[RMDB]
RNA sequence: GGGAACGACUCGAGUAGAGUCGAAAAGUGAAUGGACAGAAAGCAUUGGCCCGGCGUGGUUUGGCGUCGAUGUCCAUCACAAAACGCUCGGUAUCGUUGGGAUGGGGCGUAUCGGGAUGGCGCUGGCCUCGCCACUCAUAUUCGUAUGAGUGGCGAGAAAAGAAACAACAACAACAAC
Reactivity to DMS in 0.01 (KOAc 150mM, MgCl2 10mM, bicine 150mM(pH8.5), 24C), signal-to-noise 2, nucleotides 027 to 126: g000u000g010a020a020u030g000g000a040c020a050g000a190a080a130g040c050a130u030u020g020g010c010c010c010g010g030c100g000u030g000g000u000u000u040g050g000c000g030u020c100g000a210u000g000u010c010c000a000u010c000a030c010a020a090a070a040c050g000c060u000c020g010g000u000a090u000c060g010u000u030g000g000g020a140u010g000g000g000g010c070g020u000a010u010c120g030g000g000a050u020g010g020c040g020c040u020g000g000c160
Reactivity to 2A3 in 0.01 (KOAc 150mM, MgCl2 10mM, bicine 150mM(pH8.5), 24C), signal-to-noise 5, nucleotides 027 to 126: g040u020g050a060a070u010g010g000a010c010a010g120a160a120a010g080c080a160u140u300g060g030c040c010c020g000g090c040g020u200g060g140u090u130u290g080g000c030g010u020c010g020a020u020g010u000c000c010a000u000c000a000c010a010a110a000a000c150g030c030u050c030g040g020u100a150u100c040g040u080u070g110g020g020a090u150g020g000g030g000c040g040u050a050u050c050g000g000g050a060u050g050g000c020g000c050u050g000g000c000
Background: This 177-nucleotide RNA was probed chemically with DMS and 2A3. It was measured as part of the RMDB library OK1LIB. Conditions: 150 mM KOAc, 10 mM MgCl2 and 150 mM bicine (pH 8.5), 24 C.